The record gives the reactivity of an RNA of 177 nucleotides to 2A3 and DMS. Values cover nucleotides 27 to 126. The reactions ran in a buffer of 150 mM KOAc, 10 mM MgCl2 and 150 mM bicine (pH 8.5), at 24 C. Values are in units of 0.01, from 0 to 300, in steps of 10.
[RMDB]
RNA sequence: GGGAACGACUCGAGUAGAGUCGAAAAGUGAGCAACAAACCGGUGAUCAUGAAAGCGAACGCGAUCGCAUAGUUCCAGGGACCGAGUUGCGCCAUCCAAUUGAGCGCUGUGGGGGCUUGGCUGCCAAGUGAAAGUAUUAUUUCGAUAAUACUUUCACAAAAGAAACAACAACAACAAC
Reactivity to 2A3 in 0.01 (KOAc 150mM, MgCl2 10mM, bicine 150mM(pH8.5), 24C), signal-to-noise 9, nucleotides 027 to 126: g080u070g020a050g030c020a010a060c010a060a160a050c040c020g020g020u040g030a120u060c060a080u120g120a110a050a030g040c030g020a060a030c070g020c060g140a080u050c020g000c030a020u060a070g100u090u030c030c020a020g020g020g010a010c010c020g020a040g070u060u060g020c010g000c000c000a040u060c030c020a050a080u080u160g040a080g020c030g000c040u030g020u090g070g020g000g000g000c020u020u050g040g000c020u060g030c030c030a130a030
Reactivity to DMS in 0.01 (KOAc 150mM, MgCl2 10mM, bicine 150mM(pH8.5), 24C), signal-to-noise 9, nucleotides 027 to 126: g020u010g010a080g010c050a060a060c080a040a110a130c120c040g000g020u000g010a070u010c040a070u010g010a090a130a120g010c020g010a050a080c110g010c100g000a060u000c030g020c040a070u020a090g010u000u010c040c020a090g000g000g000a060c040c030g000a090g010u010u000g000c040g000c030c030a040u010c080c100a080a100u040u020g000a080g010c030g010c020u010g010u010g010g010g000g010g000c050u000u010g010g010c030u010g000c030c050a090a130